[RMDB]
This 207-nucleotide RNA was probed chemically with 2A3. The data come from the RNA Mapping Database (RMDB), library OK3TST.
RNA sequence: GGGAACGACUCGAGUAGAGUCGAAAACAUAUGCUAACUCUGCUUUUAACAUCUUUCAAGCUGUUUCUGCUAAUGUUAAUAAGCUUUUGGGGGUUGAUUCAAACGCUUGUAACAACGUUACAGUAAAAUCCAUACAACGUAAAAUUUACGAUAAUUGGUGAGAGGGACUAUUCGUAGUCCCUCUCACAAAAGAAACAACAACAACAAC
Reactivity to 2A3 in 0.01 (KOAc 150mM, MgCl2 10mM, bicine 150mM(pH8.5), 24C), signal-to-noise 1, nucleotides 027 to 156: c000a000u250a000u150g050c040u070a060a040c010u000c020u060g020c000u000u000u040u070a000a000c000a020u040c010u080u270u070c120a090a000g040c020u090g110u270u250u030c070u060g030c020u000a010a000u000g000u000u000a020a020u170a090a040g010c000u030u030u210u000g000g000g000g000g000u040u100g000a040u100u110c010a060a050a000c010g020c090u170u090g040u030a010a010c100a000a050c090g020u060u030a040c020a040g010u090a010a000a000a120u010c000c020a060u070a180c060a110a050c020g060u080a000a100a100a180u300u270u120a030c000g000a000u060a140a050u130u090g010